[RMDB]
RNA sequence: GGGAACGACUCGAGUAGAGUCGAAAACGCUGGGCAAGUUACCCAGAGCGACGAUCUCCUGAAGCGCGCACGGGAGGGAGCUCCAGGAACUUGCCUGUGCUGAAGCGCGCACGGCAACCGAAAGGUGCGAAAAGACACUAAUCUUCGGAUUAGUGUCCCCUUGGAGCAGUUUCGACUGCUCCAAGGGAAAAGAAACAACAACAACAAC
Reactivity to 2A3 in 0.01 (KOAc 150mM, MgCl2 10mM, bicine 150mM(pH8.5), 24C), signal-to-noise 2, nucleotides 027 to 156: c010g000c010u030g000g000g000c000a000a040g000u050u120a300c030c020c030a070g010a010g010c000g180a220c010g000a000u000c000u000c010c000u040g070a130a070g010c010g000c000g000c020a010c010g030g000g000a010g000g000g000a000g000c000u040c050c060a120g060g010a000a010c000u000u000g000c000c000u000g000u010g000c010u020g030a100a030g010c010g000c000g000c000a000c000g010g010c010a010a020c020c000g050a110a030a010g030g000u070g010c030g060a030a090a020a100g030a000c010a000c030u040a000a000u040c010u060u180c300g130g000a000u000u000a000g010u000g000u000c010